[RMDB]
RNA sequence: GGGAACGACUCGAGUAGAGUCGAAAAACGAGGCAAUCAACCGGCCGGAUCCCAUUGUGAUAACGCGCAGCAUGGCGCUGCGGCGAGGGCAAGUCACCGUCUACGCCGGCGACUAUGAGCAGGCCGCCAGGCCCCAAAAAUUCGUUUUUGGGGCCUGAAAAGAAACAACAACAACAAC
Reactivity to 2A3 in 0.01 (KOAc 150mM, MgCl2 10mM, bicine 150mM(pH8.5), 24C), signal-to-noise 3, nucleotides 027 to 126: a000c050g020a060g030g000c040a010a110u060c040a080a160c040c040g050g000c020c010g030g030a060u030c020c000c000a040u060u150g040u070g070a150u080a170a040c040g010c010g000c050a060g030c060a120u150g180g000c050g010c050u020g000c000g020g000c010g020a210g020g040g000c030a060a000g000u010c000a010c050c000g030u030c050u110a070c130g050c040c010g030g000c010g020a030c020u060a090u150g010a040g030c060a040g090g000c010c000g070c120
Reactivity to DMS in 0.01 (KOAc 150mM, MgCl2 10mM, bicine 150mM(pH8.5), 24C), signal-to-noise 8, nucleotides 027 to 126: a140c110g010a150g020g010c040a070a060u010c140a080a100c190c100g000g010c010c020g000g010a090u000c010c010c010a150u010u010g010u000g000a120u010a070a140c120g010c010g010c020a090g000c090a100u000g020g010c110g010c020u000g010c010g010g000c010g010a130g010g000g010c040a060a050g000u000c010a040c010c030g000u000c060u010a080c160g000c300c010g010g010c020g010a020c020u000a060u000g000a130g010c060a110g000g010c010c020g020c090